[RMDB]
RNA sequence: GGGAACGACUCGAGUAGAGUCGAAAACGCAGAGGGUUCUGAUAACAAAGAACCUAGAUAGCCGCAUCGGUAUUAUAGGAUGUAGUCGGUGAGCAGGAAUGCCUGCAUCGUAAGCCUAUAAGUAAAUUUAAGUGUAAUCACUUCGGUGAUUACACAAGAUCUUUUACCUGUUCGCAGGUAAAAGAUCAAAAGAAACAACAACAACAAC
Reactivity to DMS in 0.01 (KOAc 150mM, MgCl2 10mM, bicine 150mM(pH8.5), 24C), signal-to-noise 1, nucleotides 027 to 156: c090g030c030a110g000a190g000g000g000u010u010c010u010g010a160u010a150a150c300a130a300a030g000a000a000c000c010u000a050g000a230u010a140g020c080c000g000c120a050u000c080g050g030u020a050u000u000a030u000a020g010g010a100u000g010u010a130g000u010c000g000g010u000g030a160g050c000a060g040g030a140a160u010g000c000c010u030g000c030a020u000c000g000u000a090a140g000c010c000u000a010u000a010a060g010u000a060a060a100u010u010u000a060a190g010u000g000u000a000a000u000c010a000c010u010u010c180g050g000u010g000a000u000u000a010c010a000c000a030a010
Reactivity to 2A3 in 0.01 (KOAc 150mM, MgCl2 10mM, bicine 150mM(pH8.5), 24C), signal-to-noise 2, nucleotides 027 to 156: c080g030c040a020g060a070g090g020g010u000u000c010u010g060a070u100a200a070c040a030a140a010g000a000a000c000c000u020a020g020a070u100a030g060c060c040g060c090a080u150c100g050g000u060a030u110u050a010u070a010g060g020a050u060g120u170a050g160u100c010g000g040u030g030a040g040c000a010g010g060a250a080u120g170c000c000u010g010c010a010u020c020g040u020a070a040g020c000c000u030a030u010a060a030g070u090a030a080a180u170u220u120a160a050g000u000g000u000a010a010u000c000a010c000u030u030c140g020g000u000g010a010u010u000a000c000a000c000a000a000